An RNA of 207 nucleotides, treated with 2A3 and read out base by base.
Reactivities are given for positions 27 through 156.

[RMDB]
RNA sequence: GGGAACGACUCGAGUAGAGUCGAAAAACCUUUGUGACGACAUCGAUCUAUGGACAUGCACAAUGUGCCUUUCCCAUUGGGAAAGGCGAAGUGCAACAGCCAUAGGGAGUCGUCACUCUGGUAAACAGAUUGCAAUACUUCGGUAUUGCAAUCUGAACCCAGCAUAGACCUUCGGGUCUAUGCUGGGAAAAGAAACAACAACAACAAC
Reactivity to 2A3 in 0.01 (KOAc 150mM, MgCl2 10mM, bicine 150mM(pH8.5), 24C), signal-to-noise 2, nucleotides 027 to 156: a040c020c010u030u000u000g000u000g000a000c000g010a010c030a260u220c110g120a090u060c000u000a000u000g020g020a040c030a110u030g000c030a010c010a040a150u270g160u300g110c010c030u020u000u000c040c030c080a300u210u300g030g000g000a010a010a000g000g010c000g040a070a000g010u000g000c010a010a010c060a010g050c000c000a000u000a010g030g020g000a020g000u000c000g000u000c000a000c000u000c000u000g010g000u000a100a090a000c000a000g000a000u000u000g020c000a010a000u000a000c000u080u100c300g100g000u000a000u000u000g000c020a010a000u000c000u000g000a010a000
Source: RMDB library RNAMAK, as collected in RNAgym.
Conditions: 150 mM KOAc, 10 mM MgCl2 and 150 mM bicine (pH 8.5), 24 C.
For 2A3 the reverse transcriptase was SuperScript II with manganese.